About this RNA: Chemical mapping of a 177-nucleotide RNA with 2A3 and DMS. DMS adducts were read by reverse transcription with MarathonRT. For 2A3 the reverse transcriptase was SuperScript II with manganese. The reactions ran in a buffer of 150 mM KOAc, 10 mM MgCl2 and 150 mM bicine (pH 8.5), at 24 C. The data come from the RNA Mapping Database (RMDB), library M2PK50.
[RMDB]
RNA sequence: GGGAACGACUCGAGUAGAGUCGAAAAUUGCAAGCCUUCGGGCUUGCAAGGUGUCGGAAUGCGGAUUAUAUAAUCCUCCGCUUAAGGAUUAUACCGACUUAAGUGCCAGGCUGUUCGCAGCCUGGAAUCCAAUCGUAUCAUUCGUGAUACGAUUGGAAAAAGAAACAACAACAACAAC
Reactivity to 2A3 in 0.01 (KOAc 150mM, MgCl2 10mM, bicine 150mM(pH8.5), 24C), signal-to-noise 2, nucleotides 027 to 126: u010u000g010c010a020a000g010c020c010u050u070c280g100g020g000c000u000u010g000c000a000a010g010g000u050g040u040c020g010g060a120a050u130g050c040g030g040a030u120u040a070u110a030u040a200a060u030c010c000u020c010c050g050c080u060u090a070a020g050g010a010u030u030a020u110a090c010c010g030a030c000u080u080a130a040g090u050g160c010c000a000g000g010c000u000g000u020u060c180g030c140a000g000c010c000u000g000g000a000a010
Reactivity to DMS in 0.01 (KOAc 150mM, MgCl2 10mM, bicine 150mM(pH8.5), 24C), signal-to-noise 5, nucleotides 027 to 126: u000u000g000c000a000a010g010c000c000u000u020c230g030g010g020c000u000u000g000c010a000a000g000g010u000g010u000c010g010g010a170a100u000g000c090g010g000a120u000u000a190u000a060u010a020a030u000c030c050u000c140c150g010c140u000u010a110a040g010g000a050u000u000a050u000a080c020c020g010a030c030u000u010a100a080g010u020g010c000c000a010g000g010c000u000g010u000u010c170g010c000a020g010c000c020u000g000g000a030a030